RNA sequence: GGGAACGACUCGAGUAGAGUCGAAAAGUUAGCGUCAGUUGGCCAACCGGUCGGUAUGCGUCAACCGGCCGAUCAGCGUAUACACUAAUGUCAGUUGAUCACAGCGUUAUAUAUGCGAUACGUUAACUACACGCGUGGUCACGCAUGAUACCGUAACAUUGAGCCUAGUGUUCGCACUAGGCUCAAUAAAAGAAACAACAACAACAAC
Reactivity to 2A3 in 0.01 (KOAc 150mM, MgCl2 10mM, bicine 150mM(pH8.5), 24C), signal-to-noise 1, nucleotides 027 to 156: g020u060u040a000g010c010g080u070c070a110g040u120u000g060g010c010c000a080a000c000c000g000g000u090c060g050g050u090a110u150g190c060g000u030c000a010a010c000c000g000g000c060c000g000a020u060c000a000g010c000g060u060a010u120a040c160a030c060u070a100a080u040g010u060c010a040g020u110u040g050a000u040c000a000c010a090g000c000g110u060u000a080u010a030u000a000u300g070c070g150a130u000a110c090g010u140u020a050a090c040u090a080c070a000c060g010c000g010u000g050g040u000c000a000c000g030c090a040u040g000a000u060a090c160c000g000u010a000a060c110